[RMDB]
RNA sequence: GGGAACGACUCGAGUAGAGUCGAAAAGAGGAAGUCGAAGGCUUCUCCCCCGCGCAGCUCCGCCAGCAGGAUGCGCGUGGGCGCCAUGCGCAGCGCCGCGCGCAACAGCUCGGUGGCCGAUACGGCACGCCAUAGUCGUAUUCGUACGACUAUGGCGAAAAGAAACAACAACAACAAC
Reactivity to DMS in 0.01 (KOAc 150mM, MgCl2 10mM, bicine 150mM(pH8.5), 24C), signal-to-noise 2, nucleotides 027 to 126: g040a120g000g000a040a000g040u000c010g000a160a120g060g010c000u020u000c000u000c020c010c020c010c040g040c060g020c110a100g030c110u000c010c020g030c020c030a040g000c020a130g020g000a170u010g000c000g010c000g000u000g010g020g000c000g010c020c040a070u030g020c190g000c160a150g000c010g000c000c010g000c050g000c000g020c000a020a020c030a120g020c010u000c070g040g020u000g000g020c300c030g010a120u020a040c070g000g000c030a240
Reactivity to 2A3 in 0.01 (KOAc 150mM, MgCl2 10mM, bicine 150mM(pH8.5), 24C), signal-to-noise 1, nucleotides 027 to 126: g100a000g070g080a010a010g000u140c170g120a290a090g100g010c020u020u000c030u050c000c080c000c020c030g030c020g070c030a020g040c000u000c010c020g060c010c020a000g060c000a000g080g030a120u030g000c000g000c000g000u010g120g010g050c030g000c000c030a220u300g070c080g040c160a020g000c010g000c000c000g000c000g010c000g030c000a000a020c000a020g050c000u120c100g000g070u060g000g000c020c010g060a100u150a180c060g040g010c090a000